[RMDB]
RNA sequence: GGGAACGACUCGAGUAGAGUCGAAAAUACUCACAUUUCGAUGUGAGUAACUGUCUAGACGCUAGCGCCGAUCAAGCGCUAGCGACUAGACUUUAUUGAUCGCCAGCUAACCUUUCGAGGUUAGCAACGAGCCAGUAGUUUUCGAACUACUGGCUCGAAAAGAAACAACAACAACAAC
Reactivity to DMS in 0.01 (KOAc 150mM, MgCl2 10mM, bicine 150mM(pH8.5), 24C), signal-to-noise 1, nucleotides 027 to 126: u000a030c000u000c000a010c010a010u000u000u000c140g000a010u000g010u000g000a020g010u000a010a040c050u000g010u010c000u000a000g030a080c000g010c000u000a000g000c010g030c000c000g060a160u020c300a180a060g000c010g000c000u000a000g000c000g010a000c000u000a000g000a000c000u000u000u000a090u000u000g000a060u000c040g020c040c090a190g030c000u000a000a000c000c000u000u000u010c170g010a050g010g000u000u000a000g000c020a010a010
Reactivity to 2A3 in 0.01 (KOAc 150mM, MgCl2 10mM, bicine 150mM(pH8.5), 24C), signal-to-noise 2, nucleotides 027 to 126: u040a010c010u010c000a000c000a000u000u100u090c200g160a020u020g010u000g020a000g000u010a020a050c000u010g010u000c000u010a000g010a010c010g040c010u000a000g000c020g020c020c000g230a250u240c100a050a020g030c000g000c010u000a000g000c000g000a000c000u010a020g000a000c000u000u000u000a020u000u030g140a080u110c050g000c140c000a030g000c010u000a000a000c000c000u080u080u150c290g110a010g020g010u020u000a000g010c000a010a000